RNA sequence: GGGAACGACUCGAGUAGAGUCGAAAAGGGGUCUCUUAAGGUUAGCGUAAGCUUUUGACGAGCUGAAGCCUCCACGGCUCGAUAAGCUUACGAACUACUAACCUAAGAGACGGAGGCACCCGACUCCGUAUAUCACGCCUUCGGGCGUGAUAUACGGCCCAUUGUACUCCUUCGGGAGUACAAUGGGAAAAGAAACAACAACAACAAC
Reactivity to 2A3 in 0.01 (KOAc 150mM, MgCl2 10mM, bicine 150mM(pH8.5), 24C), signal-to-noise 1, nucleotides 027 to 156: g080g010g000g020u020c000u010c010u000u020a150a230g000g000u020u000a030g000c000g020u010a000a010g000c030u150u160u220u210g170a140c070g000a000g040c010u010g030a090a030g000c000c000u000c000c000a030c020g020g000c000u010c020g080a130u110a300a070g010c000u010u010a020c020g000a000a000c020u220a020c000u010a060a000c000c000u000a000a000g010a000g000a000c010g000g000a010g000g010c000a020c050c010c020g180a180c060u020c030c000g000u000a000u000a000u000c010a030c020g000c000c000u080u160c300g070g040g010c000g000u000g000a000u000a000u000a010c000g000g030
Chemical mapping of a 207-nucleotide RNA with 2A3. 2A3 adducts were read by reverse transcription with SuperScript II with manganese. Reactivities are given for positions 27 through 156. The RNA was probed in 150 mM KOAc, 10 mM MgCl2 and 150 mM bicine (pH 8.5) at 24 C. The 2A3 profile rests on 973 reads.